Structure probing data (DMS and 2A3) for a 177-nucleotide construct. The reactions ran in a buffer of 150 mM KOAc, 10 mM MgCl2 and 150 mM bicine (pH 8.5), at 24 C. Values are in units of 0.01, from 0 to 300, in steps of 10. It was measured as part of the RMDB library VIROID.
[RMDB]
RNA sequence: GGGAACGACUCGAGUAGAGUCGAAAAGGCGAAGAAGUCCUUCAGGGAUCCCCGGGGAAACCUGGAGGAAGUCCGACGAGAUCGCGGCUGGGGCUUAGGACCCCACUCCUGCGAGACAGGAGUAAUCGAAUACUCCUAUCUUCGGAUAGGAGUAUUCAAAAGAAACAACAACAACAAC
Reactivity to DMS in 0.01 (KOAc 150mM, MgCl2 10mM, bicine 150mM(pH8.5), 24C), signal-to-noise 2, nucleotides 027 to 126: g020g010c020g000a180a090g000a110a100g020u000c000c000u000u000c010a010g000g010g000a240u000c010c000c090c150g000g030g000g000a030a050a290c000c010u000g000g010a040g000g000a010a050g010u000c020c020g020a080c120g020a080g010a170u000c060g010c020g010g000c110u000g010g000g000g030c030u000u030a180g010g000a190c030c000c000c020a020c000u000c000c010u010g000c020g030a150g000a120c020a020g000g000a020g020u000a060a040u000c150
Reactivity to 2A3 in 0.01 (KOAc 150mM, MgCl2 10mM, bicine 150mM(pH8.5), 24C), signal-to-noise 1, nucleotides 027 to 126: g080g000c040g010a050a000g030a060a020g220u000c000c020u000u010c000a000g000g000g010a020u070c020c020c040c050g230g020g000g000a000a060a000c010c010u000g020g010a000g010g000a000a000g000u000c000c000g020a040c030g060a080g010a090u070c030g020c030g060g000c030u060g000g020g010g030c020u070u130a060g100g110a170c000c000c000c000a000c000u000c010c000u010g020c060g100a170g020a100c000a010g000g010a000g000u040a010a110u170c090